The data come from the RNA Mapping Database (RMDB), library M2RFPK. This 207-nucleotide RNA was probed chemically with 2A3. 2A3 adducts were read by reverse transcription with SuperScript II with manganese. For 2A3, 1,410 sequencing reads were counted. The RNA was probed in 150 mM KOAc, 10 mM MgCl2 and 150 mM bicine (pH 8.5) at 24 C.
[RMDB]
RNA sequence: GGGAACGACUCGAGUAGAGUCGAAAACCAGCUUGCCUGUGUCCUAGGGAAUUGGAAGGUCAUCCUUCACAGGAUCGUGUGGAAGUCCUGCUCGGGGCGGAAGCAUUCAAACCAUUCGAGCUAGUCAAAAACCGGCUGAUCUUCGGAUCAGCCGGAAGAUCUCUUUAAACUUCGGUUUAAAGAGAUCAAAAGAAACAACAACAACAAC
Reactivity to 2A3 in 0.01 (KOAc 150mM, MgCl2 10mM, bicine 150mM(pH8.5), 24C), signal-to-noise 3, nucleotides 027 to 156: c000c000a010g020c030u020u110g020c010c010u060g010u030g030u070c000c020u060a050g030g020g080a190a210u160u080g070g010a070a040g050g000u090c020a060u020c020c000u040u090c050a040c030a040g030g030a040u070c070g020u070g010u030g030g010a030a020g000u000c000c010u060g100c080u080c090g000g000g010g000c000g010g010a010a000g010c000a000u130u130c070a040a080a120c020c010a060u030u160c000g000a000g030c050u110a050g110u110c040a080a050a020a060a080c000c050g010g000c000u000g000a000u020c010u040u060c210g020g000a000u000c010a000g000c030c000g000g000a010a010